[RMDB]
RNA sequence: GGGAACGACUCGAGUAGAGUCGAAAAAGUCUACUUUUCGAAGUAGACUGUGCUCCCACUUGAUCCAGGUCUCACCGUGUCAUUGCCCACGACACUCGGGCGUAAUAGAUUGGUUCGCCAAUCUAAAUAUGCAACAUACGUUCGCGUAUGUUGCAUAAAAAGAAACAACAACAACAAC
Reactivity to DMS in 0.01 (KOAc 150mM, MgCl2 10mM, bicine 150mM(pH8.5), 24C), signal-to-noise 4, nucleotides 027 to 126: a020g000u010c000u000a010c000u000u010u000u020c170g010a030a010g010u000a000g000a000c000u000g020u000g020c200u010c000c000c010a110c150u000u010g020a060u000c050c020a030g010g000u000c010u000c040a090c040c070g010u000g000u000c040a190u000u000g010c050c000c020a170c140g000a080c060a060c060u010c110g020g000g020c050g000u000a070a100u000a010g000a020u000u000g010g000u000u020c280g010c010c000a000a000u000c000u000a010a080a130
Reactivity to 2A3 in 0.01 (KOAc 150mM, MgCl2 10mM, bicine 150mM(pH8.5), 24C), signal-to-noise 1, nucleotides 027 to 126: a000g010u000c000u000a000c000u010u060u030u080c140g060a020a000g000u010a000g000a000c000u000g000u030g020c010u010c000c000c000a020c020u000u090g030a050u010c060c020a040g000g090u040c030u020c030a100c030c010g010u040g060u020c000a060u030u130g020c000c010c000a050c040g050a000c010a010c050u060c070g020g000g000c000g010u050a110a050u010a060g000a000u000u000g030g000u040u020c170g010c060c010a000a000u000c000u020a010a070a000
Structure probing data (DMS and 2A3) for a 177-nucleotide construct. Reactivities are rounded to 0.1 and cut off at 0 and 3. 2A3 adducts were read by reverse transcription with SuperScript II with manganese. Values cover nucleotides 27 to 126.